[RMDB]
RNA sequence: GGGAACGACUCGAGUAGAGUCGAAAACGGGUUACAAGUACGGCGACGUUACGGUUUUGGACCACAUGGCCUACGACGGUCUGCACGACGUGUUCACCGAUCAGCCGAUGGGCGCGCUCACCGAGCACGGCCUCACAUUAUUCGUAAUGUGAGGCCGAAAAGAAACAACAACAACAAC
Reactivity to DMS in 0.01 (KOAc 150mM, MgCl2 10mM, bicine 150mM(pH8.5), 24C), signal-to-noise 3, nucleotides 027 to 126: c050g010g000g020u000u000a040c060a050a090g030u000a050c050g000g000c060g020a110c030g010u000u010a140c140g010g000u000u030u000u000g010g010a100c080c140a170c180a060u000g010g000c020c020u010a100c170g010a070c020g000g000u010c020u000g040c040a040c060g000a080c100g020u010g000u010u000c100a050c030c030g040a070u000c140a140g010c030c070g000a040u010g000g000g000c030g010c150g010c030u000c040a110c040c070g000a090g000c130a140
Reactivity to 2A3 in 0.01 (KOAc 150mM, MgCl2 10mM, bicine 150mM(pH8.5), 24C), signal-to-noise 2, nucleotides 027 to 126: c010g050g020g050u080u120a060c050a070a040g020u030a040c040g000g000c030g010a050c050g060u090u080a030c040g020g030u000u020u040u090g060g030a090c010c080a050c050a110u120g030g000c000c000u070a070c130g060a010c030g030g080u020c050u080g000c040a030c030g070a030c070g020u030g000u020u040c070a100c050c000g010a110u090c050a030g030c000c000g060a100u090g020g030g020c020g000c000g020c020u000c000a120c010c070g010a010g000c000a010
An RNA of 177 nucleotides, treated with DMS and 2A3 and read out base by base. For DMS the reverse transcriptase was MarathonRT. Values cover nucleotides 27 to 126. High DMS reactivity at an A or C suggests that its Watson-Crick edge is free. The 2A3 profile rests on 2,291 reads.